RNA sequence: GGGAACGACUCGAGUAGAGUCGAAAAAGCCAAGGCCUGUCGGGAAUAACCGACGUUAGGGAAUUCGGCAAGUUAGUCCCGUAAGUUCGCGAUAAGGGAUGCCUGCCUCGCAAUGAGGCAGGUCGCACAGGACAAAAUACUUCGGUAUUUUGUCCUGAAAAGAAACAACAACAACAAC
Reactivity to 2A3 in 0.01 (KOAc 150mM, MgCl2 10mM, bicine 150mM(pH8.5), 24C), signal-to-noise 1, nucleotides 027 to 126: a000g000c000c000a010a000g020g030c000c030u120g000u000c020g010g000g000a140a300u130a240a060c000c000g000a010c000g010u040u120a050g060g000g030a030a040u080u060c100g000g020c000a010a030g080u140u190a060g040u000c000c010c000g000u050a050a000g040u020u170c140g000c010g070a070u050a100a040g040g000g050a000u080g000c010c000u010g000c000c010u010c010g000c100a110a300u300g000a000g000g000c000a010g000g000u000c000g000c010a060
Reactivity to DMS in 0.01 (KOAc 150mM, MgCl2 10mM, bicine 150mM(pH8.5), 24C), signal-to-noise 2, nucleotides 027 to 126: a090g000c010c010a020a110g000g020c010c000u000g000u000c010g000g010g000a160a110u020a150a170c000c000g000a030c020g000u010u030a080g000g000g000a040a060u000u000c170g020g010c000a070a060g030u000u020a070g000u000c010c000c010g010u010a090a150g000u000u010c120g020c020g030a100u000a050a110g000g000g010a070u000g010c000c000u000g010c000c000u000c000g010c170a100a090u010g000a010g000g020c000a000g000g020u000c050g020c080a190